[RMDB]
RNA sequence: GGGAACGACUCGAGUAGAGUCGAAAAGUGAUGAGGUGGAGACUGAGCGUGAGAACGGUGUCUAAGCGCCUUACUCGGCCUGCGCUUAGACUCAGGGAUAAUAUGAUUAUCCCUAUGAUGGCCGAGACUUGAGGUCUGUAUUCGUACAGGCUUCAAGAAAAGAAACAACAACAACAAC
Reactivity to 2A3 in 0.01 (KOAc 150mM, MgCl2 10mM, bicine 150mM(pH8.5), 24C), signal-to-noise 9, nucleotides 027 to 126: g100u080g030a090u040g020a030g030g040u040g020g020a030g010a030c030u040g010a010g010c040g020u050g020a060g010a100a030c060g050g010u050g000u030c000u000a000a000g000c000g010c000c020u040u070a090c000u000c000g000g000c000c000u000g000c000g000c000u000u000a000g000a000c020u020c060a010g000g000g030a000u010a020a030u150a180u260g160a080u080u010a000u010c000c000c000u030a110u140g080a020u050g000g000c000c000g000a000g000a000
Reactivity to DMS in 0.01 (KOAc 150mM, MgCl2 10mM, bicine 150mM(pH8.5), 24C), signal-to-noise 9, nucleotides 027 to 126: g010u010g010a070u000g010a060g010g020u000g010g000a070g010a090c080u000g000a070g010c050g020u000g010a110g010a090a090c130g010g010u000g010u000c000u000a010a010g000c000g010c000c030u000u010a060c010u000c000g000g010c000c010u000g010c000g010c000u000u000a010g000a020c010u000c090a030g010g000g000a010u000a010a020u000a150u010g010a090u000u000a010u000c000c000c000u000a030u010g010a050u010g000g020c000c000g000a020g000a120
The record gives the reactivity of an RNA of 177 nucleotides to 2A3 and DMS. The 2A3 profile rests on 208,592 reads. Conditions: 150 mM KOAc, 10 mM MgCl2 and 150 mM bicine (pH 8.5), 24 C. DMS adducts were read by reverse transcription with MarathonRT. Values cover nucleotides 27 to 126.